[RMDB]
RNA sequence: GGGAACGACUCGAGUAGAGUCGAAAAGAUAUGGAUUCCUGUGGUGCCAGAUCGUCGGAAACGAUAGAUCGGUAAUACCACUGGAAUCCUAAGUCAAAAGUAUGAGAUAGUUCGCUAUCUCAUACAAGACCUUUAAUUACUUCGGUAAUUAAAGGUCAAAAGAAACAACAACAACAAC
Reactivity to 2A3 in 0.01 (KOAc 150mM, MgCl2 10mM, bicine 150mM(pH8.5), 24C), signal-to-noise 4, nucleotides 027 to 126: g010a000u020a010u070g000g000a000u000u010c000c010u000g000u000g000g020u050g070c060c060a080g010a020u000c010g010u000c000g020g030a040a020a020c010g010a020u100a270g010a010u030c020g000g000u080a180a130u240a100c000c000a000c000u000g010g000a000a010u000c000c000u000a010a000g000u010c010a030a000a050a170g000u010a000u010g000a000g000a000u000a010g020u050u090c180g010c170u000a010u010c000u000c000a000u000a000c000a010a010
Reactivity to DMS in 0.01 (KOAc 150mM, MgCl2 10mM, bicine 150mM(pH8.5), 24C), signal-to-noise 4, nucleotides 027 to 126: g000a010u000a080u010g000g000a020u000u000c000c000u000g010u000g010g020u000g020c010c010a150g010a010u000c000g010u000c000g010g000a020a020a050c000g020a010u000a100g010a000u000c010g010g020u000a070a080u020a030c000c000a000c000u010g010g000a000a010u000c000c000u000a000a050g010u000c010a080a100a130a150g010u000a000u000g000a010g010a020u000a010g000u000u010c230g020c010u000a000u000c000u000c000a000u000a000c010a070a110